[RMDB]
RNA sequence: GGGAACGACUCGAGUAGAGUCGAAAAAAAGGCCCAUCGAACCGGGCAACAGCUGGUUCCAACCGAAACAUGUCGAAGCAUGACCUCUGCCGAGGUAGUUCGUGGGGUAGAGCGACCGAUUGGGGAGCCUAGGUACAUUGUUCGCAAUGUACCUAGGAAAAGAAACAACAACAACAAC
Reactivity to DMS in 0.01 (KOAc 150mM, MgCl2 10mM, bicine 150mM(pH8.5), 24C), signal-to-noise 4, nucleotides 027 to 126: a110a090a150g010g000c010c010c020a080u010c100g000a030a030c090c060g000g000g000c060a100a090c190a060g000c010u000g010g010u000u000c030c060a050a080c060c040g010a070a100a160c100a030u000g010u010c080g010a100a100g010c050a050u000g000a090c020c010u000c030u000g020c180c100g000a060g000g020u000a050g010u000u000c030g010u010g010g000g000g010u000a100g010a080g010c060g010a070c060c030g000a110u000u000g010g000g000g010a130g000
Reactivity to 2A3 in 0.01 (KOAc 150mM, MgCl2 10mM, bicine 150mM(pH8.5), 24C), signal-to-noise 3, nucleotides 027 to 126: a000a000a050g100g040c030c000c010a040u040c040g010a010a020c030c030g020g100g000c070a110a050c030a110g100c030u050g030g000u070u000c020c000a040a030c050c040g090a070a040a020c030a020u090g040u080c070g090a080a010g060c030a020u050g050a050c020c000u020c030u080g090c040c050g010a030g030g010u030a030g030u030u050c050g030u050g000g060g000g000u040a030g020a020g060c050g020a050c020c020g070a110u050u130g000g000g000g040a010g000